[RMDB]
RNA sequence: GGGAACGACUCGAGUAGAGUCGAAAAAUCGUCUAACGUCAACGUGCCGACUUGAACCGGACGAGUUUGAUCGGCGAUUGUACCGAGAAUUUGAAAGCCUGAUACACCGUAUUCCAUUGCUUUAUUCAAUGAUAAGCCGUUUCGACGGCUUAUCAUUAAAAGAAACAACAACAACAAC
Reactivity to DMS in 0.01 (KOAc 150mM, MgCl2 10mM, bicine 150mM(pH8.5), 24C), signal-to-noise 3, nucleotides 027 to 126: a020u000c050g020u000c010u010a110a130c300g010u000c020a020a050c020g030u010g000c020c010g000a060c100u020u000g020a100a140c110c040g000g000a030c050g000a120g010u000u000u000g010a050u000c110g010g010c010g000a040u000u010g020u000a120c000c010g000a120g010a040a120u000u010u000g000a060a090a100g000c020c070u000g000a060u000a030c070a070c080c050g000u000a110u000u000c030c050a090u020u010g010c070u000u000u000a110u020u030c100
Reactivity to 2A3 in 0.01 (KOAc 150mM, MgCl2 10mM, bicine 150mM(pH8.5), 24C), signal-to-noise 2, nucleotides 027 to 126: a000u030c010g000u000c030u060a060a070c040g030u010c020a030a010c030g100u120g140c000c000g000a060c010u030u170g050a060a050c040c010g020g040a050c050g060a120g080u050u110u060g060a070u090c000g000g010c010g010a030u070u000g030u000a020c000c030g020a030g040a120a210u290u250u190g120a140a080a000g000c020c020u030g020a010u000a050c100a060c090c060g020u040a080u070u020c020c000a090u120u150g010c020u060u080u190a140u150u110c030
This 177-nucleotide RNA was probed chemically with DMS and 2A3. It was measured as part of the RMDB library OK2TST. High DMS reactivity at an A or C suggests that its Watson-Crick edge is free. For 2A3, 1,062 sequencing reads were counted. DMS adducts were read by reverse transcription with MarathonRT.